[RMDB]
RNA sequence: GGGAACGACUCGAGUAGAGUCGAAAAUUACUCUUCGGAGUAACAACACCGUAGGGCUGAACUACAGCUCGUAGCAGCUUGGACCACAGCUUCGAAAGAGGCUGUGCUAGCUGUGAAGAGCUGCAGCCCUAAACGGACCGAACGUCUUCGGACGUAAUCAUUCUAUAGCUUUCGAGCUAUAGAAUGAAAAAGAAACAACAACAACAAC
Reactivity to 2A3 in 0.01 (KOAc 150mM, MgCl2 10mM, bicine 150mM(pH8.5), 24C), signal-to-noise 6, nucleotides 027 to 156: u030u000a010c000u020c010u030u070c240g100g010a000g010u030a020a040c060a050a040c030a040c030c000g010u030a030g020g010g010c000u000g010a130a030c110u190a070c300a000g000c000u000c000g000u020a000g000c010a000g000c000u140u250g050g040a090c150c010a000c020a000g000c010u000u000c010g080a120a080a070g000a000g010g000c000u000g000u010g000c010u010a000g000c000u010g020u050g030a100a010g000a000g010c000u000g000c000a000g000c010c000c000u000a010a000a000c000g000g010a010c020c040g080a090a020c010g010u000c010u040u070c220g110g010a000c000g010u020a010a110
Reactivity to DMS in 0.01 (KOAc 150mM, MgCl2 10mM, bicine 150mM(pH8.5), 24C), signal-to-noise 2, nucleotides 027 to 156: u000u000a000c000u000c010u000u000c300g070g000a040g000u000a000a030c040a100a090c030a120c020c010g010u000a040g040g050g010c010u000g010a090a190c010u010a100c020a020g010c010u000c000g010u000a300g000c000a030g020c000u000u000g040g000a070c130c010a010c010a020g010c010u000u010c000g020a120a120a230g000a030g000g010c000u000g010u000g000c000u010a010g010c010u010g020u000g000a160a300g010a030g000c000u010g000c000a040g000c000c010c020u000a000a010a040c040g010g000a080c010c010g010a110a030c000g000u010c010u000u010c300g020g020a060c000g020u000a070a210